[RMDB]
RNA sequence: GGGAACGACUCGAGUAGAGUCGAAAAAAAAGAUAUGGAGCGUACUACCCACCAGUUUGCACUCGAAGAACUUAUCUCGGAAACGAGAUAAGGGAGAGUCAAACUGAGGUACGCUCCUAAGUCAAAAGUGUAACAAUUAGUUCGCUAAUUGUUACACAAAAGAAACAACAACAACAAC
Reactivity to DMS in 0.01 (KOAc 150mM, MgCl2 10mM, bicine 150mM(pH8.5), 24C), signal-to-noise 6, nucleotides 027 to 126: a060a040a080a060g000a010u000a040u010g000g000a010g040c000g010u000a000c000u000a080c070c020c120a300c040c010a000g000u000u000u000g010c170a000c000u000c000g000a110a120g000a070a200c000u000u000a000u000c000u000c000g010g000a020a010a030c010g010a010g000a010u000a000a010g000g000g000a010g000a010g010u000c000a000a000a010c000u000g010a040g000g010u010a010c010g020c000u000c000c000u000a000a040g000u000c020a070a090a100a150
Reactivity to 2A3 in 0.01 (KOAc 150mM, MgCl2 10mM, bicine 150mM(pH8.5), 24C), signal-to-noise 4, nucleotides 027 to 126: a000a000a000a030g010a010u030a010u040g000g000a010g000c000g000u010a010c010u050a060c070c070c030a020c000c000a010g000u000u000u010g090c230a040c010u020c030g300a300a020g000a010a010c000u000u010a000u000c000u000c000g020g000a000a000a000c000g000a000g000a010u000a010a000g000g000g000a020g000a000g000u010c000a010a000a000c000u000g000a000g000g000u000a000c000g000c000u000c000c000u000a000a000g000u020c010a050a030a120a120
Conditions: 150 mM KOAc, 10 mM MgCl2 and 150 mM bicine (pH 8.5), 24 C. An RNA of 177 nucleotides, treated with DMS and 2A3 and read out base by base. It was measured as part of the RMDB library TTRDES. 2A3 is a SHAPE reagent: it acylates the 2'-hydroxyl of flexible nucleotides of all four kinds.